Structure probing data (DMS and 2A3) for a 177-nucleotide construct. The DMS profile rests on 1,631 reads. Values are in units of 0.01, from 0 to 300, in steps of 10. DMS adducts were read by reverse transcription with MarathonRT. Conditions: 150 mM KOAc, 10 mM MgCl2 and 150 mM bicine (pH 8.5), 24 C.
[RMDB]
RNA sequence: GGGAACGACUCGAGUAGAGUCGAAAAAAUAUAUUGGUGAUCACGUUGUGUCUCAUAUUUCGCACUUUACGAAACUACCCCCGCUUUUAUCAGUAUAAGGCGCGUCGGAGUGCGCCGAUAAAGUUAACACCGUACACAGGUUCGCCUGUGUACGGUGAAAAGAAACAACAACAACAAC
Reactivity to DMS in 0.01 (KOAc 150mM, MgCl2 10mM, bicine 150mM(pH8.5), 24C), signal-to-noise 1, nucleotides 027 to 126: a080a160u000a040u000a070u000u000g000g040u000g000a090u010c080a080c150g000u000u000g000u030g010u010c010u000c040a130u020a010u050u010u020c050g000c130a000c040u000u000u030a050c030g000a060a100a170c130u000a230c000c010c000c010c040g000c010u000u000u000u000a020u020c060a090g070u010a060u000a070a050g010g010c060g020c080g000u030c040g030g000a030g010u010g000c000g010c000c010g000a000u020a040a060a020g020u080u000a040a160
Reactivity to 2A3 in 0.01 (KOAc 150mM, MgCl2 10mM, bicine 150mM(pH8.5), 24C), signal-to-noise 1, nucleotides 027 to 126: a000a000u300a000u060a140u030u150g100g130u100g140a060u080c030a100c230g050u110u110g000u030g030u010c020u000c060a030u030a010u080u010u080c000g000c000a070c000u060u000u000a030c080g060a070a080a000c020u080a060c000c000c000c000c000g000c010u050u200u090u040a130u140c100a050g060u060a100u000a170a110g030g000c000g000c060g060u020c050g010g080a070g010u090g000c000g000c000c000g000a000u100a050a000a000g000u000u100a070a000